[RMDB]
RNA sequence: GGGAACGACUCGAGUAGAGUCGAAAAGUCAAUCUAGACAUAGUGUAGAUGCACGCUGCGGCUGAGACCAUCUUGUACCGUCUGACCAUCGACAAUUUGCAUUUGUAGGCGGACCUAUCCUUUACACACGUUCGAGUCAAUUCGUUGACUCGAACGUAAAAGAAACAACAACAACAAC
Reactivity to 2A3 in 0.01 (KOAc 150mM, MgCl2 10mM, bicine 150mM(pH8.5), 24C), signal-to-noise 5, nucleotides 027 to 126: g050u050c010a040a120u000c050u170a030g020a050c030a070u080a020g050u050g040u060a060g010a090u060g020c030a020c070g020c040u050g020c010g030g010c020u060g060a000g000a100c000c000a020u020c020u040u090g060u060a040c030c000g010u000c020u010g090a080c020c000a060u060c040g030a030c100a110a130u050u080u210g050c100a100u040u030u130g060u060a030g000g000c010g000g000a010c010c000u040a070u070c030c000u080u130u140a070c120a010c010
Reactivity to DMS in 0.01 (KOAc 150mM, MgCl2 10mM, bicine 150mM(pH8.5), 24C), signal-to-noise 2, nucleotides 027 to 126: g020u010c040a120a110u020c080u030a040g000a120c040a080u000a020g100u030g000u000a000g040a000u020g000c150a090c010g030c070u020g010c030g000g000c110u000g050a030g090a060c140c050a130u010c040u000u070g000u010a140c020c000g000u000c010u000g000a130c110c080a030u020c050g000a090c110a080a150u020u020u050g020c140a050u040u000u000g000u000a050g020g000c100g020g000a080c090c030u000a020u000c110c000u020u020u000a040c100a060c210